[RMDB]
RNA sequence: GGGAACGACUCGAGUAGAGUCGAAAAGGGCAGUUCCAUAAAGGCAGGAACUUGAGCUGAAUCUCCCAUGUCUACAACAUCUAGCGAGCUCAGUAAAUAUUUGCAGAAGGAUGAAUCCAUCUCUGAGUAUUUGUGGAGAGGAGACAGGGACAGGAGAAGCACUCCUAUAUUUCGAUAUAGGAGUGCUAAAAGAAACAACAACAACAAC
Reactivity to 2A3 in 0.01 (KOAc 150mM, MgCl2 10mM, bicine 150mM(pH8.5), 24C), signal-to-noise 3, nucleotides 027 to 156: g040g000g000c000a020g010u020u020c010c000a010u170a030a110a000g110g000c040a050g030g020a020a020c010u060u140g080a040g030c050u040g050a060a090u040c030u010c040c020c000a100u060g030u000c020u090a140c040a150a040c010a170u050c010u050a030g060c000g050a000g000c010u000c040a010g060u090a030a090a090u170a090u080u250u220g040c050a030g020a160a050g090g010a040u090g100a080a060u070c080c020a060u030c010u000c010u060g020a000g060u070a190u140u070u090g060u060g020g050a030g000a040g070g000a020g010a000c050a050g030g000g000a000c010a020g050g020a070g030a030
Reactivity to DMS in 0.01 (KOAc 150mM, MgCl2 10mM, bicine 150mM(pH8.5), 24C), signal-to-noise 2, nucleotides 027 to 156: g000g010g010c000a140g000u010u000c000c010a200u020a110a080a070g040g050c050a150g110g010a050a070c030u010u000g040a060g030c030u030g000a120a060u000c060u000c010c020c030a120u000g030u000c010u000a090c110a150a140c020a070u010c020u000a030g010c100g030a090g050c070u000c020a120g020u010a080a030a030u000a060u010u000u020g020c040a100g000a090a300g050g000a100u000g020a190a150u000c010c000a040u000c050u020c000u010g020a090g010u000a050u000u000u000g000u030g000g020a110g030a170g030g000a050g010a090c050a050g010g000g010a090c030a100g000g000a120g000a080